[RMDB]
RNA sequence: GGGAACGACUCGAGUAGAGUCGAAAAUAAGCCGGGUGAAAUCCCCGGCCGCCGUAAACCCGAGGUUUCCAGGGCAACGUGUUUCGUCCCUGGGUUAGCCGGGACCUAAGCCGAGGCCGAGAGGCGUGUUGCAAACGUGGUUCGCCACGUUUGCAACAAAAGAAACAACAACAACAAC
Reactivity to 2A3 in 0.01 (KOAc 150mM, MgCl2 10mM, bicine 150mM(pH8.5), 24C), signal-to-noise 1, nucleotides 027 to 126: u080a020a010g000c010c010g000g010g000u140g000a000a010a060u070c030c000c000c000g000g000c000c000g000c010c000g150u060a100a100a100c000c000c030g080a080g000g000u000u000u080c000c000a060g010g000g080c050a100a000c030g000u020g150u030u100u100c280g120u300c000c000c060u100g000g000g000u000u070a040g000c070c050g010g000g010a030c000c050u060a020a000g000c000c000g020a040g030g040c020c030g140a090g010a000g040g030c030g000u010